[RMDB]
RNA sequence: GGGAACGACUCGAGUAGAGUCGAAAACUCUUGUUAGGUGAAAGUUGAUGGUCGCCGUGUCAGUCCAUGCCUUUGAAAACAGUUCUAUGUAGUAGGGAGUCGCGAACCUAUGAGAGUUAGAACUUGCUAUGCCUUGGACUCUUCGGAGUCCAAGGAACGAUUAUUGACGUUUCGACGUCAAUAAUCGAAAAGAAACAACAACAACAAC
Reactivity to 2A3 in 0.01 (KOAc 150mM, MgCl2 10mM, bicine 150mM(pH8.5), 24C), signal-to-noise 2, nucleotides 027 to 156: c020u030c030u060u130g060u110u110a100g000g040u060g080a130a080a110g020u080u090g050a050u060g050g040u020c030g030c020c020g040u030g020u040c060a010g010u030c010c010a030u100g030c020c050u120u110u180g130a060a080a030a040c020a020g000u030u000c020u020a040u110g060u100a050g010u000a010g000g000g000a040g040u040c020g000c020g060a020a050c000c000u010a020u030g020a080g000a020g080u030u020a010g000a030a010c000u020u050g010c020u080a080u170g040c000c000u000u000g000g000a010c000u000c000u020u020c160g080g010a000g000u000c000c000a000a000g000g000a000a020
Reactivity to DMS in 0.01 (KOAc 150mM, MgCl2 10mM, bicine 150mM(pH8.5), 24C), signal-to-noise 3, nucleotides 027 to 156: c000u010c020u000u010g010u000u010a040g020g000u000g020a070a060a100g070u000u000g000a120u000g020g020u000c030g040c010c010g020u000g000u000c030a060g020u000c030c050a060u000g010c040c020u000u000u000g000a080a100a040a040c050a040g020u000u000c010u000a050u000g030u000a260g020u000a070g050g000g020a170g020u000c140g010c130g020a090a120c000c000u010a040u000g000a210g020a170g020u000u000a050g000a020a040c040u000u010g040c010u000a120u000g000c000c010u010u000g020g020a040c000u000c000u000u000c300g010g000a030g000u000c010c010a000a010g000g010a010a020